[RMDB]
Structure probing data (2A3 and DMS) for a 207-nucleotide construct.
The reactions ran in a buffer of 150 mM KOAc, 10 mM MgCl2 and 150 mM bicine (pH 8.5), at 24 C.
RNA sequence: GGGAACGACUCGAGUAGAGUCGAAAAUCCGACGAGCUGAACGCUUUCGAAGGAAAGCUUGACCCGCUAAUCUUCUGCAACGCCAUUACGAGGACUGCCCUUAGAGGCUCAUGGCGAUAGGUCACCCAAAACUAUUUGAGGUUCGCCUCAAAUAGAAGUAAAUGAACUUGUUCGCAAGUUCAUUUACAAAAGAAACAACAACAACAAC
Reactivity to 2A3 in 0.01 (KOAc 150mM, MgCl2 10mM, bicine 150mM(pH8.5), 24C), signal-to-noise 7, nucleotides 027 to 156: u010c000c010g020a060c040g010a020g010c030u090g140a160a050c090g000c010u080u080u090c030g050a040a030g040g020a070a050a000g000c010u050u060g030a030c010c010c000g010c050u060a100a090u070c080u200u030c050u100g050c060a120a060c020g000c010c000a050u080u100a080c090g050a080g050g080a080c080u080g010c020c000c000u110u140a100g030a140g100g000c010u020c020a010u030g010g000c010g030a070u120a070g010g020u020c020a050c010c010c010a030a110a040a050c000u000a000u010u000u000g000a000g020g030u050u120c210g050c070c000u010c000a000a000a000u000a000g000a050a010
Reactivity to DMS in 0.01 (KOAc 150mM, MgCl2 10mM, bicine 150mM(pH8.5), 24C), signal-to-noise 2, nucleotides 027 to 156: u010c020c010g020a110c020g000a030g010c010u000g030a050a050c180g000c010u010u010u000c020g020a300a170g010g010a050a040a000g020c020u000u000g010a040c000c010c030g030c020u000a110a130u000c070u010u000c040u010g020c020a120a120c030g010c010c030a060u010u000a120c060g010a140g030g000a070c050u000g020c040c010c030u010u000a080g020a130g020g050c020u010c000a080u010g010g010c030g020a120u000a050g020g000u010c020a100c020c010c040a060a050a090a210c020u000a000u000u000u020g010a020g040g030u000u000c300g030c010c000u000c020a010a020a020u010a000g010a060a090

Annotation:
For 2A3, 6,604 sequencing reads were counted.